[RMDB]
RNA sequence: GGGAACGACUCGAGUAGAGUCGAAAACAGUAUACCGCACAAUUUCACGAGGACAAAAUUAUGGCUUUUUGGCAUCGGCAAUACCGCGCUGAUCUUUUCGGAUGGAAGGUAUCGCGCAUCCUUGAUCCCUCCGCUCCUGGUGUACAUCAAAAAGAUGGCUAAAGUUUGUCUUCGGACAAACUUUAGCAAAAGAAACAACAACAACAAC
Reactivity to 2A3 in 0.01 (KOAc 150mM, MgCl2 10mM, bicine 150mM(pH8.5), 24C), signal-to-noise 1, nucleotides 027 to 156: c050a000g060u140a060u040a130c090c020g030c000a030c050a150a110u150u210u120c060a060c050g020a000g080g000a030c010a050a140a000a040u140u060a140u140g100g000c060u090u010u010u000u240g000g000c010a020u020c000g040g060c070a030a050u070a120c010c010g000c000g000c050u090g050a000u080c000u100u090u010u020c030g230g010a090u070g030g080a040a080g080g020u020a080u020c030g000c000g000c060a030u020c000c000u010u070g030a050u080c020c030c050u040c070c000g010c020u010c040c000u060g070g000u030g000u020a040c020a010u070c060a020a040a040a040a000g110a020u270g020

Structure probing data (2A3) for a 207-nucleotide construct. The 2A3 profile rests on 428 reads. Reactivities are given for positions 27 through 156.